The data come from the RNA Mapping Database (RMDB), library TTRDEL. The record gives the reactivity of an RNA of 177 nucleotides to DMS and 2A3. For DMS the reverse transcriptase was MarathonRT. The reactions ran in a buffer of 150 mM KOAc, 10 mM MgCl2 and 150 mM bicine (pH 8.5), at 24 C. For 2A3, 2,927 sequencing reads were counted.

[RMDB]
RNA sequence: GGGAACGACUCGAGUAGAGUCGAAAAGAUAUGGAAUGUUGUAGGGAGCGGUACGUGAGUCGGAAACGACUCUUCGCGAGGAUCUACACCAUUCCUAAGUCAAAACAAUCACGUUCGCGUGAUUGAAGUAAGAGCAACUGUUCGCAGUUGCUCUUACAAAAGAAACAACAACAACAAC
Reactivity to DMS in 0.01 (KOAc 150mM, MgCl2 10mM, bicine 150mM(pH8.5), 24C), signal-to-noise 2, nucleotides 027 to 126: g000a040u010a300u000g000g000a000a010u000g000u000u000g000u000a020g010g000g000a050g010c050g010g010u000a050c300g030u000g010a040g000u000c000g010g000a110a050a200c010g000a000c000u000c000u010u000c000g020c000g010a060g010g000a030u000c000u000a020c000a000c030c010a020u010u000c000c000u000a010a090g010u010c050a090a090a170a180c000a020a000u010c000a000c010g000u000u000c250g030c050g030u000g000a000u000u000g010a060a140
Reactivity to 2A3 in 0.01 (KOAc 150mM, MgCl2 10mM, bicine 150mM(pH8.5), 24C), signal-to-noise 2, nucleotides 027 to 126: g010a030u070a010u140g010g000a000a000u010g000u050u020g010u010a010g000g050g030a080g060c040g040g090u250a170c150g210u140g030a000g000u000c010g000g000a040a060a050c020g020a010c000u030c020u010u030c000g000c020g070a230g000g010a020u000c000u000a000c000a000c030c000a010u010u000c010c000u000a070a000g000u020c020a010a030a090a130c020a000a010u010c000a000c030g040u120u080c300g000c010g100u000g000a000u000u010g000a100a010
Source information:
In probing experiments dimethyl sulfate is read out at A N1 and C N3, which are open when not base-paired.